[RMDB]
RNA sequence: GGGAACGACUCGAGUAGAGUCGAAAAGAUAUGGAACGCUGCCUUCAACAGCGCUAGUUCGGAAACGAACUGAGCGACAUGAAGACAGCGUUCCUAAGUCAAAUCAAUGUGGUUCGCCACAUUGAAACCUCGCUUAAAAGUUCGCUUUUAAGCGAGGAAAAGAAACAACAACAACAAC
Reactivity to DMS in 0.01 (KOAc 150mM, MgCl2 10mM, bicine 150mM(pH8.5), 24C), signal-to-noise 2, nucleotides 027 to 126: g010a030u000a110u040g000g010a000a020c000g010c010u000g020c010c000u000u030c020a080a100c250a140g000c000g000c010u010a040g020u010u000c010g030g010a070a010a090c020g010a010a000c000u000g020a000g020c010g030a030c110a300u000g010a020a000g020a000c000a010g000c000g040u000u000c010c000u000a030a050g010u000c010a120a120a090u000c010a000a010u000g030u000g000g000u010u010c300g020c000c030a010c000a000u000u000g000a010a120a180
Reactivity to 2A3 in 0.01 (KOAc 150mM, MgCl2 10mM, bicine 150mM(pH8.5), 24C), signal-to-noise 3, nucleotides 027 to 126: g020a010u030a010u060g000g000a000a020c010g000c010u010g040c010c020u090u020c120a300a200c080a250g000c000g000c000u000a000g000u000u000c010g010g020a010a030a030c020g020a010a000c020u160g180a020g000c010g040a080c150a300u300g000a010a000g020a000c000a010g010c000g000u010u020c000c000u000a000a000g000u000c000a020a010a090u050c000a000a020u010g020u010g000g100u070u110c300g100c090c000a020c010a000u020u000g000a020a000a010